[RMDB]
RNA sequence: GGGAACGACUCGAGUAGAGUCGAAAAUCAGCUGGGUGUGGUGGCGCAUGCCUGUAAAUUCCAGCUACUUGGGAGGCUGAGGCACGAGAAUCGCUUGAACCCGGGAGGCAGAGGUUGCAGUGAGCUGAGAUCGUGCCAUUGCACUCCAGCCUGGGCAUCAGCCCUAAUAGUUCGCUAUUAGGGCUGAAAAAGAAACAACAACAACAAC
Reactivity to 2A3 in 0.01 (KOAc 150mM, MgCl2 10mM, bicine 150mM(pH8.5), 24C), signal-to-noise 1, nucleotides 027 to 156: u020c000a000g010c000u000g000g000g000u020g020u000g020g000u010g000g000c030g000c010a000u030g010c010c000u040g060u040a040a040a030u070u050c000c000a020g020c010u060a130c020u110u060g000g030g000a030g010g000c030u050g040a030g000g000c040a000c120g070a060g050a070a070u040c040g010c080u030u120g050a090a140c000c000c000g020g040g000a020g030g090c080a030g000a030g060g000u090u120g020c000a010g050u040g060a080g020c050u090g090a050g010a250u180c080g040u050g000c000c010a000u010u040g010c010a000c000u000c000c000a000g040c040c010u010g000g010g060c060a040
Reactivity to DMS in 0.01 (KOAc 150mM, MgCl2 10mM, bicine 150mM(pH8.5), 24C), signal-to-noise 1, nucleotides 027 to 156: u000c060a080g010c030u000g000g030g060u000g010u000g000g020u000g010g020c000g000c060a070u010g020c040c020u020g000u000a040a060a150u000u000c000c010a030g020c050u000a050c060u010u010g000g010g000a060g000g010c030u020g020a120g010g000c000a040c020g000a070g010a070a070u000c050g000c030u000u000g020a040a100c030c010c010g030g040g030a140g010g020c030a000g030a120g000g040u000u000g030c030a070g000u000g000a080g000c000u000g020a090g020a040u000c060g050u000g000c020c000a010u000u000g000c010a040c010u000c030c010a070g000c010c000u000g020g000g020c070a200
Structure probing data (2A3 and DMS) for a 207-nucleotide construct. The data come from the RNA Mapping Database (RMDB), library OK3TST. Conditions: 150 mM KOAc, 10 mM MgCl2 and 150 mM bicine (pH 8.5), 24 C. DMS adducts were read by reverse transcription with MarathonRT.